[RMDB]
RNA sequence: GGGAACGACUCGAGUAGAGUCGAAAAUUGUCUUUUGGGUCUGGUUUAUUUCACUUAGCAGCAUGUCCUCAAGGCUCACCCAUGUUGUAGAAUGUGUCAGAAUGUCCUUCCUCUUGAAGGCUGAGUAUGUACGUAGGUUGUUCGCAACCUACGUACAAAAAGAAACAACAACAACAAC
Reactivity to DMS in 0.01 (KOAc 150mM, MgCl2 10mM, bicine 150mM(pH8.5), 24C), signal-to-noise 1, nucleotides 027 to 126: u010u000g010u000c050u000u000u000u000g010g010g020u000c050u000g010g010u000u010u020a040u020u000u010c060a050c130u000u000a080g000c060a040g000c090a020u020g000u010c020c010u000c110a060a130g020g000c040u010c070a060c040c020c000a050u010g040u020u000g000u000a070g000a080a080u010g030u010g000u000c060a070g000a120a050u020g000u010c030c000u000u000c040c240u000c160u020u010g000a020a030g020g010c050u000g000a040g000u010a090

This 177-nucleotide RNA was probed chemically with DMS. DMS adducts were read by reverse transcription with MarathonRT. For DMS, 1,334 sequencing reads were counted.